[RMDB]
RNA sequence: GGGAACGACUCGAGUAGAGUCGAAAAAAGUAGAGGAGUAUGUGCUGAUUAAAAGGUGGCAGCUUCUUGAUUAUCAUUGGUUCUUGCUGAGGAAUGUAUUCUAAUUAGGCCAGUUACCAACACAUAACUGAAUCUAAUACUUCGGUAUUAGAUUCAGAAAAGAAACAACAACAACAAC
Reactivity to 2A3 in 0.01 (KOAc 150mM, MgCl2 10mM, bicine 150mM(pH8.5), 24C), signal-to-noise 1, nucleotides 027 to 126: a000a010g060u070a020g000a010g000g010a010g010u010a020u050g020u000g030c000u010g000a100u300u190a050a010a010a050g000g000u010g010g020c000a010g010c000u030u030c010u010u020g020a000u050u110a070u120c080a050u020u030g000g000u090u010c000u010u030g050c010u000g000a060g070g000a100a040u140g100u250a240u110u000c040u030a120a150u090u020a050g000g060c000c010a010g020u070u050a020c020c020a010a030c080a040c010a080u170a190a040
Reactivity to DMS in 0.01 (KOAc 150mM, MgCl2 10mM, bicine 150mM(pH8.5), 24C), signal-to-noise 3, nucleotides 027 to 126: a040a070g020u000a190g000a030g010g010a060g010u000a010u010g010u000g000c000u000g010a120u010u030a110a150a140a240g010g010u000g000g000c000a020g000c000u000u000c020u010u000g000a150u010u000a050u000c110a170u000u000g020g010u000u000c020u000u000g010c020u020g000a180g010g010a040a030u000g030u010a070u000u000c020u000a040a130u000u000a170g010g010c010c040a050g010u000u000a050c020c010a060a040c230a050c190a100u030a090a110

The record gives the reactivity of an RNA of 177 nucleotides to 2A3 and DMS. High DMS reactivity at an A or C suggests that its Watson-Crick edge is free. For DMS the reverse transcriptase was MarathonRT.